[RMDB]
RNA sequence: GGGAACGACUCGAGUAGAGUCGAAAAUAUGUGCACAUGAGUAAAAGCCUUGACAUCAAUAAGUUCUGCACCAGCCAGCGUCAGUUCAACUCACAGGCGGUGUUUCAGUGCCUGGACGAGCUACUCGCUACUUACGAGGCUUCGGCCUCGUAAGUAGAAAAGAAACAACAACAACAAC
Reactivity to 2A3 in 0.01 (KOAc 150mM, MgCl2 10mM, bicine 150mM(pH8.5), 24C), signal-to-noise 1, nucleotides 027 to 126: u280a080u100g040u060g030c000a030c010a120u160g100a010g060u060a020a220a020a000g020c000c020u000u090g040a080c010a050u060c010a020a260u110a260a000g050u070u080c010u060g020c040a030c010c020a010g000c050c030a080g000c090g020u060c020a040g030u110u150c050a040a010c030u000c060a030c000a000g000g020c000g100g010u080g020u060u030u040c030a010g090u000g060c000c030u000g030g010a030c060g050a040g000c030u030a060c010u010c000g020
Reactivity to DMS in 0.01 (KOAc 150mM, MgCl2 10mM, bicine 150mM(pH8.5), 24C), signal-to-noise 1, nucleotides 027 to 126: u020a070u010g010u000g000c020a030c100a120u000g010a110g020u010a060a070a080a200g040c040c040u000u000g040a060c040a070u030c040a080a130u020a100a050g010u010u000c050u000g020c030a050c030c030a080g010c010c020a060g010c020g000u000c090a010g000u000u000c060a060a090c050u010c060a070c040a060g000g010c000g010g010u000g020u020u000u010c120a130g030u000g000c000c000u010g010g000a080c140g000a030g000c020u000a050c070u030c060g020